[RMDB]
RNA sequence: GGGAACGACUCGAGUAGAGUCGAAAAGCAUGCAUUCCGACUCGGCAUGCGAAAGGAUGGAGCAUGCAUGCGAAAGGAUGGACCGGCAUGCGAAAGGAUGGGAUGGCUCUGGCCGCAGCAUGCGAAAGGAUGGACGAUUAGAGCGGACCGUAAUCGCACAUUCUGGAAGUUUCGACUUCCAGAAUGUAAAAGAAACAACAACAACAAC
Reactivity to DMS in 0.01 (KOAc 150mM, MgCl2 10mM, bicine 150mM(pH8.5), 24C), signal-to-noise 1, nucleotides 027 to 156: g010c010a020u000g000c010a280u000u030c010c030g020a270c060u000c040g030g060c040a070u020g020c030g020a010a100a110g030g010a070u010g010g000a300g020c000a060u000g030c000a060u000g090c000g050a130a110a070g000g000a130u000g010g000a140c040c030g030g140c010a030u000g000c000g000a010a050a050g030g020a060u010g000g000g020a090u000g020g010c040u000c000u000g080g000c000c000g040c040a230g030c010a030u000g000c010g050a060a100a080g030g000a100u000g000g000a050c020g040a180u060u000a120g010a060g000c000g010g010a020c060c050g000u000a040a110u000c010g000c150
Reactivity to 2A3 in 0.01 (KOAc 150mM, MgCl2 10mM, bicine 150mM(pH8.5), 24C), signal-to-noise 3, nucleotides 027 to 156: g030c010a020u030g000c030a070u180u000c010c000g090a090c060u020c020g070g020c020a010u020g010c020g030a040a050a000g110g000a070u110g000g020a020g020c020a020u080g010c010a030u040g000c020g040a120a040a020g100g010a040u100g030g060a050c030c030g090g000c010a000u050g020c010g060a080a040a000g080g020a010u110g000g020g020a020u070g050g000c010u010c000u080g010g030c020c000g030c020a000g000c020a010u070g000c000g060a060a020a000g030g010a030u050g020g030a010c040g030a030u050u090a040g000a000g040c000g020g010a000c020c020g030u090a030a110u060c020g020c050